[RMDB]
RNA sequence: GGGAACGACUCGAGUAGAGUCGAAAAGUUCGACCGUUCGCGGUCGAACAAAAUAAAACAGAACAUAGCCUCGCGAAAGCGUUGUACUGAAAGGCUAAGAAAAAACGAUAUGGUUCGCCAUAUCGAACCUUCCCAAUCAGUUCGCUGAUUGGGAAGGAAAAGAAACAACAACAACAAC
Reactivity to DMS in 0.01 (KOAc 150mM, MgCl2 10mM, bicine 150mM(pH8.5), 24C), signal-to-noise 1, nucleotides 027 to 126: g030u000u000c000g020a000c000c000g010u010u000c160g060c000g050g010u000c000g040a000a000c000a080a030a030a120u020a070a060a120a090c100a060g000a040a060c120a090u000a030g020c030c000u000c040g000c030g020a050a150a200g000c000g030u000u000g010u000a120c140u000g020a150a060a100g000g020c040u000a040a110g030a000a090a050a050a050a150c000g000a000u000a010u000g000g000u000u020c300g010c020c000a000u010a000u000c000g000a030a080
Reactivity to 2A3 in 0.01 (KOAc 150mM, MgCl2 10mM, bicine 150mM(pH8.5), 24C), signal-to-noise 1, nucleotides 027 to 126: g000u000u010c000g020a000c020c000g020u000u030c300g010c030g080g000u000c050g000a000a000c000a000a000a000a000u020a000a010a010a000c040a030g150a130a000c020a100u070a020g000c000c000u040c000g050c000g030a090a010a010g010c040g030u080u120g070u160a140c110u130g120a130a090a030g010g000c010u040a040a030g140a010a070a000a000a010a010c000g000a000u000a000u000g050g000u060u050c220g000c060c010a010u010a000u000c010g000a000a000
This 177-nucleotide RNA was probed chemically with DMS and 2A3. The RNA was probed in 150 mM KOAc, 10 mM MgCl2 and 150 mM bicine (pH 8.5) at 24 C. In probing experiments dimethyl sulfate is read out at A N1 and C N3, which are open when not base-paired. It was measured as part of the RMDB library M2PK50.